[RMDB]
RNA sequence: GGGAACGACUCGAGUAGAGUCGAAAAUCAAGUCUUGGGAGGAUCAGAUCUUAGGCGCGCUCGUCGCAGCCCCGGCAACGGUUACAGAUCACGCGAUACUUAAAACAGGGCUUUUAGCCUUGUUUUUAGGUUGCUGUAGGUUCGCCUACAGCAACCUAAAAGAAACAACAACAACAAC
Reactivity to 2A3 in 0.01 (KOAc 150mM, MgCl2 10mM, bicine 150mM(pH8.5), 24C), signal-to-noise 1, nucleotides 027 to 126: u030c020a010a080g060u000c000u060u020g120g000g000a030g020g000a000u050c030a070g010a050u000c100u060u040a000g050g000c000g000c000g080c020u030c020g110u080c020g000c020a060g000c000c030c000c000g030g060c000a000a120c000g050g010u020u060a040c010a000g080a030u030c040a040c100g000c050g050a000u140a220c010u030u150a010a000a000a000c000a000g040g000g000c020u060u010u000u300a000g010c030c000u000u000g040u000u000u000u000u010
The record gives the reactivity of an RNA of 177 nucleotides to 2A3. For 2A3, 580 sequencing reads were counted. Source: RMDB library RFM100, as collected in RNAgym.